[RMDB]
RNA sequence: GGGAACGACUCGAGUAGAGUCGAAAACAGGUGAGUGGUUCGGUGGAGGCGUUUGUGCAAGCAAUGAACGAUUUGGUGCAAGAGCUUGGCUUAGAGCAGUCGUAUUUUAUCGACCCAUCGGGUAUCGCGGAGGUAGCUAAUUCGUUAGCUACCUCCGAAAAGAAACAACAACAACAAC
Reactivity to DMS in 0.01 (KOAc 150mM, MgCl2 10mM, bicine 150mM(pH8.5), 24C), signal-to-noise 2, nucleotides 027 to 126: c120a070g000g000u020g020a070g030u010g000g000u010u000c060g020g000u000g000g000a110g020g030c060g020u000u000u010g000u010g010c100a090a070g030c070a060a080u000g010a050a070c080g010a130u000u010u000g010g000u000g010c060a080a080g000a170g000c050u000u000g020g020c070u000u000a080g000a090g020c130a110g000u010c060g030u000a080u000u010u000u010a080u010c030g000a020c010c050c030a070u000c030g000g000g000u000a080u000c080g000
Reactivity to 2A3 in 0.01 (KOAc 150mM, MgCl2 10mM, bicine 150mM(pH8.5), 24C), signal-to-noise 1, nucleotides 027 to 126: c040a030g070g000u120g060a020g000u080g000g050u100u050c080g040g000u050g010g010a030g030g040c040g000u040u110u130g070u060g020c090a050a040g000c010a020a080u160g040a040a050c050g020a070u090u160u160g080g000u110g090c030a060a000g010a010g120c020u110u090g050g000c030u000u070a010g010a020g030c020a000g020u010c020g030u010a100u030u010u000u110a150u090c000g030a010c050c000c000a040u110c040g070g000g040u150a090u130c040g000
Notes
Structure probing data (DMS and 2A3) for a 177-nucleotide construct. For DMS the reverse transcriptase was MarathonRT. The reactions ran in a buffer of 150 mM KOAc, 10 mM MgCl2 and 150 mM bicine (pH 8.5), at 24 C. Values are in units of 0.01, from 0 to 300, in steps of 10. The DMS profile rests on 1,909 reads.